An RNA of 177 nucleotides, treated with 2A3 and DMS and read out base by base.

RNA sequence: GGGAACGACUCGAGUAGAGUCGAAAAGCUAGAAUUACUAUAAUGACGAGUGGUUUCGCACUGCAUUAUUUUGCAAAUAAUGUAGAUCAGAUACGAAACUUUGAUUUUGUCCUAUUUGAUGAGUGCCGUAGGGGCUAGAUUUCGAUCUAGCCCCUACAAAAGAAACAACAACAACAAC
Reactivity to 2A3 in 0.01 (KOAc 150mM, MgCl2 10mM, bicine 150mM(pH8.5), 24C), signal-to-noise 3, nucleotides 027 to 126: g090c050u070a040g080a090a070u300u110a130c010u080a080u130a280a150u180g010a030c060g020a030g080u060g030g050u090u000u030c040g000c010a070c000u000g010c010a000u000u000a000u010u060u120u120g070c040a040a000a000u000a000a000u030g000u000a010g020a120u050c090a010g050a040u180a120c010g010a000a030a010c000u080u130u190g190a190u050u070u080u090g030u000c030c010u130a190u090u130u090g120a160u110g040a030g120u070g030c040c050
Reactivity to DMS in 0.01 (KOAc 150mM, MgCl2 10mM, bicine 150mM(pH8.5), 24C), signal-to-noise 2, nucleotides 027 to 126: g000c050u020a070g010a120a080u030u010a050c140u060a040u000a010a050u040g000a140c020g000a060g010u010g000g000u000u000u020c010g010c080a130c020u010g000c000a000u000u000a000u020u000u000u040g010c200a130a020a050u000a000a000u000g020u000a020g030a080u030c090a090g020a290u040a180c010g000a040a010a000c010u000u020u000g000a160u000u040u000u000g000u000c100c080u000a000u000u000u000g000a030u000g020a110g000u000g020c120c170

Reactivities are rounded to 0.1 and cut off at 0 and 3. Reactivities are given for positions 27 through 126. The 2A3 profile rests on 1,339 reads.